Chemical mapping of a 177-nucleotide RNA with DMS and 2A3. Values cover nucleotides 27 to 126. For 2A3, 3,139 sequencing reads were counted. For DMS the reverse transcriptase was MarathonRT. The data come from the RNA Mapping Database (RMDB), library TTRDES. The RNA was probed in 150 mM KOAc, 10 mM MgCl2 and 150 mM bicine (pH 8.5) at 24 C.

RNA sequence: GGGAACGACUCGAGUAGAGUCGAAAAGAUAUGGAAGGCUGCUUGCAUCAGCAGAACUCGGAAACGAGUUACUGCGACGACGCAAGAACUACAGCCUUCCUAAGUCAAAGUGUUCUUCGGAACACAACAUUAUGGCUCUCUUCGGAGAGCCAUAAUGAAAAGAAACAACAACAACAAC
Reactivity to DMS in 0.01 (KOAc 150mM, MgCl2 10mM, bicine 150mM(pH8.5), 24C), signal-to-noise 4, nucleotides 027 to 126: g000a060u000a300u000g000g010a010a020g000g020c000u000g000c000u000u000g000c000a080u000c000a190g010c000a000g010a050a020c010u010c000g020g020a130a110a250c000g000a020g020u000u000a100c010u000g020c010g010a120c300g000a010c020g010c000a000a040g000a080a040c050u010a300c000a010g020c000c010u000u000c000c000u000a020a090g020u000c020a070a130a120g010u000g010u000u000c000u000u020c270g070g000a000a000c000a010c000a090a190
Reactivity to 2A3 in 0.01 (KOAc 150mM, MgCl2 10mM, bicine 150mM(pH8.5), 24C), signal-to-noise 2, nucleotides 027 to 126: g000a030u070a030u200g000g000a000a000g000g050c000u000g000c000u000u020g000c020a040u010c040a090g000c010a020g010a010a000c010u000c010g030g010a060a110a070c020g010a030g040u000u040a300c010u000g020c000g070a090c160g000a000c040g000c010a000a030g020a040a000c050u170a050c080a000g000c010c000u000u020c000c000u000a010a020g000u020c060a120a100a130g000u000g050u000u020c010u050u050c300g140g010a010a000c000a000c020a090a000